This 177-nucleotide RNA was probed chemically with DMS and 2A3. Values are in units of 0.01, from 0 to 300, in steps of 10. DMS adducts were read by reverse transcription with MarathonRT. Source: RMDB libraries RFM100 and RFMREP, as collected in RNAgym. 2A3 adducts were read by reverse transcription with SuperScript II with manganese. Conditions: 150 mM KOAc, 10 mM MgCl2 and 150 mM bicine (pH 8.5), 24 C.
[RMDB]
RNA sequence: GGGAACGACUCGAGUAGAGUCGAAAAAUACUUACCUGGACGGGGUCAAUGGAUGAUCAAUAAGGUCCAUGGCCUAGGGAAGUAACCUCCAUUGCACUUAGGAGGGGUGCUUUCCUAAGGUCUGCCCUAAUAGCAGUGCAUUCGUGCACUGCUAUUAAAAAGAAACAACAACAACAAC
Reactivity to DMS in 0.01 (KOAc 150mM, MgCl2 10mM, bicine 150mM(pH8.5), 24C), signal-to-noise 4, nucleotides 027 to 126: a060u040a070c110u020u020a060c030c020u010g010g020a100c080g010g020g000g000u000c090a070a070u020g010g010a050u010g000a060u040c150a070a110u030a110a080g010g000u000c010c010a030u010g000g010c010c010u000a010g000g000g000a000a010g020u000a180a090c000c000u000c020c010a150u040u030g010c160a090c210u020u010a150g000g010a010g020g000g000g030u000g000c010u000u010u000c000c000u010a030a050g020g010u000c000u000g000c000c000c010
Reactivity to 2A3 in 0.01 (KOAc 150mM, MgCl2 10mM, bicine 150mM(pH8.5), 24C), signal-to-noise 5, nucleotides 027 to 126: a000u120a020c060u160u110a070c010c040u020g020g050a050c050g000g020g010g000u030c060a050a050u070g060g040a030u060g030a060u130c110a080a120u240a190a030g110g000u000c000c000a010u020g000g000c000c000u000a000g010g000g020a000a010g000u010a060a090c010c000u000c000c010a050u070u240g180c120a090c150u150u190a080g020g010a030g030g020g020g050u160g000c000u000u000u020c000c000u000a100a020g010g000u000c040u020g030c000c000c000